Structure probing data (DMS and 2A3) for a 177-nucleotide construct. The 2A3 profile rests on 2,438 reads. DMS adducts were read by reverse transcription with MarathonRT. For DMS, 1,866 sequencing reads were counted. Source: RMDB library TTRDES, as collected in RNAgym. Values cover nucleotides 27 to 126.
RNA sequence: GGGAACGACUCGAGUAGAGUCGAAAAAAAAGAUAUGGACAGACGGGAGACUUGUCACGCUAAGACAGCGAGUCGGAAACGACUCGUCGAGCGUCCUAAGUCGACGAUCGUCUGUCCUAAGUCAAAACUUAACUCAAUCCUUCGGGAUUGAGUUAAGAAAAGAAACAACAACAACAAC
Reactivity to DMS in 0.01 (KOAc 150mM, MgCl2 10mM, bicine 150mM(pH8.5), 24C), signal-to-noise 2, nucleotides 027 to 126: a070a050a160a000g000a020u000a300u000g000g010a010c020a020g010a040c010g000g000g030a060g000a000c000u000u000g020u000c100a000c010g040c000u000a140a130g030a080c300a160g000c030g010a010g020u010c000g050g000a170a080a140c000g030a000c000u000c000g020u000c020g000a040g010c010g030u000c070c050u000a030a020g010u000c000g020a080c280g000a030u000c000g010u000c020u000g000u000c000c000u000a010a040g000u010c030a040a090a090a120
Reactivity to 2A3 in 0.01 (KOAc 150mM, MgCl2 10mM, bicine 150mM(pH8.5), 24C), signal-to-noise 1, nucleotides 027 to 126: a000a000a000a000g110a070u130a080u130g000g010a000c000a000g000a000c010g060g020g000a000g000a000c010u000u000g050u110c060a000c030g040c040u080a180a060g130a110c050a030g060c000g010a000g000u050c010g000g010a020a090a040c000g000a000c000u000c020g000u060c000g000a020g010c040g000u070c010c020u010a020a020g000u000c020g040a300c000g000a090u000c020g000u000c000u000g000u000c000c000u010a030a010g050u000c020a020a080a060a100